The record gives the reactivity of an RNA of 207 nucleotides to 2A3 and DMS. As a SHAPE reagent, 2A3 marks flexible, mostly unpaired nucleotides at the ribose 2'-OH. The data come from the RNA Mapping Database (RMDB), library RNAMAK. The RNA was probed in 150 mM KOAc, 10 mM MgCl2 and 150 mM bicine (pH 8.5) at 24 C.
[RMDB]
RNA sequence: GGGAACGACUCGAGUAGAGUCGAAAACGCUGGGAUCCGCACACCACUGACGAAGGUCCACCGAGAUACACUGAAGCGCGCACGGUGUAUCGUUUGACGUGGACUCGAAGUGGUAGCGGAUCCUGUGCUGAAGCGCGCACGGCAACCGAAAGGUGCGGAGCUAUAAUGUGUUCGCACAUUAUAGCUCAAAAGAAACAACAACAACAAC
Reactivity to 2A3 in 0.01 (KOAc 150mM, MgCl2 10mM, bicine 150mM(pH8.5), 24C), signal-to-noise 5, nucleotides 027 to 156: c010g000c010u010g000g000g000a000u000c000c000g020c010a070c040a010c090c010a010c020u050g190a240c020g010a030a000g020g010u000c010c000a000c000c010g040a030g010a020u010a000c010a000c010u050g050a230a060g020c000g000c000g000c000a010c020g010g010u000g000u000a000u070c000g000u130u140u130g010a010c010g000u000g010g010a000c000u020c000g000a020a010g000u000g000g010u020a030g000c000g000g000a000u000c000c000u000g000u000g000c000u010g010a130a030g000c000g000c000g000c000a010c010g000g000c000a010a000c000c000g040a080a020a020g020g000u010g010c020g040
Reactivity to DMS in 0.01 (KOAc 150mM, MgCl2 10mM, bicine 150mM(pH8.5), 24C), signal-to-noise 2, nucleotides 027 to 156: c050g030c040u010g000g040g020a040u010c020c010g000c020a130c060a110c010c000a030c050u000g010a300c190g010a150a090g010g000u030c000c000a000c000c000g000a090g000a040u000a010c010a000c000u000g000a080a040g070c010g000c020g060c020a300c000g000g000u000g020u000a010u000c000g030u000u010u000g000a170c220g010u010g030g030a070c020u000c020g000a050a000g040u000g010g070u000a080g040c010g000g010a020u000c010c010u000g000u010g010c000u000g000a100a030g040c020g020c040g030c000a300c020g000g010c000a050a100c030c040g010a090a150a110g020g030u000g030c000g010

High DMS reactivity at an A or C suggests that its Watson-Crick edge is free.